RNA sequence: GGGAACGACUCGAGUAGAGUCGAAAAAAAGCAGAAUGUCACAUCAACAAAGUGACUGCUGUUCUUCAACCCUCCAUUCCUAAGGAGUUCAAAGUUUAUGAAGAUGUCUUGAUUGAUCACACUGGGAAGAUAAUGAAAUGAAAUUACUUGCAGUCGAGGCACAGUGUAAAUUCGUUUACACUGUGCCAAAAGAAACAACAACAACAAC
Reactivity to 2A3 in 0.01 (KOAc 150mM, MgCl2 10mM, bicine 150mM(pH8.5), 24C), signal-to-noise 2, nucleotides 027 to 156: a000a000a000g010c060a010g050a260a160u210g010u070c000a000c000a060u220c060a160a170c020a090a210a050g000u000g000a000c000u000g030c000u000g000u010u010c000u000u030c010a010a110c010c000c000u000c000c000a050u100u050c000c010u090a110a030g000g000a020g000u010u010c040a070a040a010g050u050u130u060a090u230g060a040a110g040a060u110g070u000c050u080u080g060a080u020u100g020a070u030c000a010c000a000c050u000g040g020g020a000a040g040a140u150a100a010u150g060a080a030a030u050g010a000a070a000u110u040a000c070u020u060g000c040a030g000u020c000g070a060
Reactivity to DMS in 0.01 (KOAc 150mM, MgCl2 10mM, bicine 150mM(pH8.5), 24C), signal-to-noise 2, nucleotides 027 to 156: a030a040a020g010c020a030g020a050a000u030g000u000c030a070c010a090u000c030a150a170c220a170a120a100g010u000g000a040c020u010g020c010u000g040u000u000c030u000u000c060a070a170c030c030c010u000c030c050a090u000u010c000c000u000a070a300g030g020a120g010u000u010c040a060a010a230g040u010u020u000a100u010g000a080a080g010a070u020g000u010c030u010u000g000a230u000u020g010a090u010c010a080c050a080c070u000g020g020g010a050a080g030a110u000a030a090u000g010a030a080a120u000g000a060a110a100u010u010a080c000u000u000g020c020a060g000u000c080g000a200